Source: RMDB library TTRDEL, as collected in RNAgym. Structure probing data (2A3 and DMS) for a 177-nucleotide construct. For DMS, 9,289 sequencing reads were counted. The reactions ran in a buffer of 150 mM KOAc, 10 mM MgCl2 and 150 mM bicine (pH 8.5), at 24 C.
RNA sequence: GGGAACGACUCGAGUAGAGUCGAAAAGAUAUGGACCAUCAAAGUCUAUACAGCGUUGAAAUCGGAAACGAUGGAGCUGUGAUAGAACCAAGUGGUCCUAAGUCAAACCGUUAGUUCGCUAACGGAAGGUAUAAAAGAGGUUCGCCUCUUUUAUACCAAAAGAAACAACAACAACAAC
Reactivity to 2A3 in 0.01 (KOAc 150mM, MgCl2 10mM, bicine 150mM(pH8.5), 24C), signal-to-noise 4, nucleotides 027 to 126: g010a000u050a000u140g000g000a010c020c000a010u140c060a100a050a050g020u010c000u010a000u020a020c000a010g000c000g300u300u060g050a030a030a000u010c000g000g050a080a040a030c010g000a010u010g000g020a020g000c000u010g020u010g010a010u010a010g010a030a030c030c010a140a040g010u000g010g010u010c000c000u010a040a010g030u020c050a040a060a090c000c000g000u000u010a000g000u000u040c300g000c180u010a000a000c000g020g050a020a100
Reactivity to DMS in 0.01 (KOAc 150mM, MgCl2 10mM, bicine 150mM(pH8.5), 24C), signal-to-noise 6, nucleotides 027 to 126: g000a030u010a300u000g010g020a010c000c000a000u000c040a090a210a250g000u000c000u000a010u000a010c010a010g000c000g020u010u010g000a050a120a020u000c000g000g000a120a070a170c010g010a020u000g000g000a080g010c000u000g000u000g010a010u000a000g010a020a020c010c060a090a210g010u000g010g000u000c000c000u000a020a070g020u000c030a110a110a150c010c000g000u000u000a010g010u010u000c260g010c000u010a010a010c000g000g000a050a020